[RMDB]
RNA sequence: GGGAACGACUCGAGUAGAGUCGAAAAGAAGAGAGUAGAAGAUGGCCGCCAUGGUCCAAGCCCCUCGCUGGCGCCGGCUGGGCAACACCAUUGCACUCCGGUGGCGUAUGGUGCAAGAGAGAAAGAAGCUAUCACCAGCAUUCGUGCUGGUGAUAGCAAAAGAAACAACAACAACAAC
Reactivity to DMS in 0.01 (KOAc 150mM, MgCl2 10mM, bicine 150mM(pH8.5), 24C), signal-to-noise 1, nucleotides 027 to 126: g000a120a100g040a100g000a040g000u000a050g000a140a050g000a040u030g060g030c020c000g050c070c160a090u010g000g030u000c020c000a090a160g000c000c000c030c040u000c070g060c050u020g000g040c040g000c050c000g000g030c200u020g000g000g000c030a110a140c080a140c180c100a130u030u030g000c020a100c020u000c140c030g000g080u000g030g000c070g040u040a080u000g010g020u000g000c130a050a120g000a100g000a050g040a080a080a120g120a120a070
Reactivity to 2A3 in 0.01 (KOAc 150mM, MgCl2 10mM, bicine 150mM(pH8.5), 24C), signal-to-noise 1, nucleotides 027 to 126: g180a030a080g060a020g040a010g050u140a070g050a210a010g080a090u030g060g000c060c020g040c070c040a100u170g000g000u000c000c000a090a000g050c000c000c000c030u010c030g120c100u080g000g060c000g000c040c050g060g000c040u040g020g000g000c000a000a010c040a000c080c000a110u010u070g000c000a020c030u060c040c000g050g000u050g130g000c000g000u010a040u120g030g010u040g000c060a060a000g050a000g000a000g020a100a080a000g150a040a040
This 177-nucleotide RNA was probed chemically with DMS and 2A3. Values cover nucleotides 27 to 126. The DMS profile rests on 1,268 reads. For DMS the reverse transcriptase was MarathonRT.